[RMDB]
Source: RMDB library M2RFPK, as collected in RNAgym. This 207-nucleotide RNA was probed chemically with DMS and 2A3. As a SHAPE reagent, 2A3 marks flexible, mostly unpaired nucleotides at the ribose 2'-OH. The RNA was probed in 150 mM KOAc, 10 mM MgCl2 and 150 mM bicine (pH 8.5) at 24 C.
RNA sequence: GGGAACGACUCGAGUAGAGUCGAAAAUUCUCAGCACUCAUCAAGAAGUAGGCUUAGGCCAAUUGCUUGGUGGUGAAAGUAGAGAGAAGGUAGCACUUCGACGCCUCUAAGUACGCUGUGGGAGUAGAAAACUGGACAUCGUUCGCGAUGUCCAGAAGUAUACCAAUAAGUUCGCUUAUUGGUAUACAAAAGAAACAACAACAACAAC
Reactivity to DMS in 0.01 (KOAc 150mM, MgCl2 10mM, bicine 150mM(pH8.5), 24C), signal-to-noise 4, nucleotides 027 to 156: u000u000c000u000c000a190g000c020a060c020u020c010a010u000c010a020a020g030a020a040g030u000a120g020g030c010u000u010a170g060g000c000c010a050a070u010u000g000c010u000u000g020g040u000g010g030u010g020a060a060a140g010u000a100g010a140g020a120g010a070a070g020g010u000a120g010c110a100c020u000u000c030g010a100c060g020c040c010u000c040u000a060a100g020u000a050c050g030c020u000g030u000g010g000g000a110g020u000a090g000a070a060a110a150c000u000g000g000a030c000a010u000c000g030u000u010c300g020c020g010a020u000g000u000c000c000a000g010a000a070
Reactivity to 2A3 in 0.01 (KOAc 150mM, MgCl2 10mM, bicine 150mM(pH8.5), 24C), signal-to-noise 6, nucleotides 027 to 156: u030u000c010u000c010a030g030c010a010c060u190c010a030u010c010a030a010g020a100a040g050u100a040g030g000c010u100u080a090g150g020c020c020a060a130u060u080g020c010u000u000g010g000u000g010g000u020g030a070a040a000g060u160a020g020a010g010a010g000a090a010g050g020u070a020g050c040a020c080u050u040c040g070a050c040g060c020c000u030c010u030a070a070g050u050a040c050g010c100u050g010u080g050g000g030a070g020u120a030g100a070a070a040a050c000u000g000g000a000c000a000u000c010g020u060u030c100g010c010g100a000u000g000u000c000c000a000g000a000a000

2A3 adducts were read by reverse transcription with SuperScript II with manganese.